[RMDB]
RNA sequence: GGGAACGACUCGAGUAGAGUCGAAAAGAUAUGGAUCCUGAAGCUAAGUUCUCCGUCGGAAACGACGAGAUAAGCUUAGGAUCCUAAGUCAAACUGGUGGUAAUGACUUCGGUCAUUACCACCAGAACAGGUUACGUCAGUUCGCUGACGUAACCUGAAAAGAAACAACAACAACAAC
Reactivity to DMS in 0.01 (KOAc 150mM, MgCl2 10mM, bicine 150mM(pH8.5), 24C), signal-to-noise 1, nucleotides 027 to 126: g000a020u010a300u000g010g000a000u000c000c010u000g030a010a020g010c030u010a090a110g030u010u000c010u000c120c160g010u000c000g000g010a030a040a250c030g050a010c010g000a010g000a010u020a220a060g010c000u000u010a000g000g000a010u000c000c000u000a030a030g000u020c040a120a080a230c000u000g000g000u000g000g010u010a000a010u000g020a000c030u000u010c160g010g000u000c000a000u070u020a000c030c000a000c000c000a000g000a020a090
Reactivity to 2A3 in 0.01 (KOAc 150mM, MgCl2 10mM, bicine 150mM(pH8.5), 24C), signal-to-noise 1, nucleotides 027 to 126: g040a000u060a010u080g000g000a000u040c010c000u160g300a010a000g000c000u050a140a110g240u140u000c020u060c170c150g010u020c000g020g000a030a130a150c020g000a000c000g000a000g000a000u030a020a000g030c010u010u010a020g000g000a010u000c000c000u000a000a000g020u020c020a070a070a070c020u000g010g000u030g010g010u010a000a010u010g000a010c000u100u070c300g010g000u020c000a000u080u050a000c000c000a010c000c000a000g000a000a000
About this RNA: Structure probing data (DMS and 2A3) for a 177-nucleotide construct. Reactivities are rounded to 0.1 and cut off at 0 and 3. It was measured as part of the RMDB library TTRDEL. Values cover nucleotides 27 to 126.